Conditions: 150 mM KOAc, 10 mM MgCl2 and 150 mM bicine (pH 8.5), 24 C. Structure probing data (2A3 and DMS) for a 177-nucleotide construct. For 2A3 the reverse transcriptase was SuperScript II with manganese. For DMS, 2,259 sequencing reads were counted. The 2A3 profile rests on 4,441 reads. Values cover nucleotides 27 to 126. The data come from the RNA Mapping Database (RMDB), library OK1LIB.
RNA sequence: GGGAACGACUCGAGUAGAGUCGAAAACAUCGACUGUGGAAAAUGUGCACACAUUCUAUCAAAGAUUCAGCUAUGAGUUAGGUAGCUUUAAAGGUGCAUGCUCUGCUUUAAAAUACAACCUGACUAAGUUGAGAGAGUACUUCGGUACUCUCUCAACAAAAGAAACAACAACAACAAC
Reactivity to 2A3 in 0.01 (KOAc 150mM, MgCl2 10mM, bicine 150mM(pH8.5), 24C), signal-to-noise 4, nucleotides 027 to 126: c030a070u100c050g080a040c050u040g000u040g050g080a010a040a080a180u190g000u040g040c000a000c000a020c030a100u100u000c020u100a150u070c060a130a150a070g070a080u100u070c030a010g010c050u080a080u210g030a030g030u040u040a010g000g020u000a030g000c000u050u140u150a170a180a030g040g000u010g010c010a020u030g000c020u010c000u030g030c000u030u060u140a070a200a020a020u200a040c070a050a060c030c000u030g040a060c020u050a130a000
Reactivity to DMS in 0.01 (KOAc 150mM, MgCl2 10mM, bicine 150mM(pH8.5), 24C), signal-to-noise 2, nucleotides 027 to 126: c110a050u010c150g040a090c050u090g020u030g030g010a010a070a210a030u060g000u000g000c000a050c040a080c100a110u020u000c050u000a090u030c100a170a130a050g000a040u000u000c080a090g000c030u120a100u000g000a080g020u000u000a130g000g010u000a030g000c260u000u000u010a010a010a130g030g020u000g000c010a040u020g020c140u010c010u000g070c010u000u020u010a000a010a100a070u040a070c190a070a000c070c000u000g010a000c070u030a080a170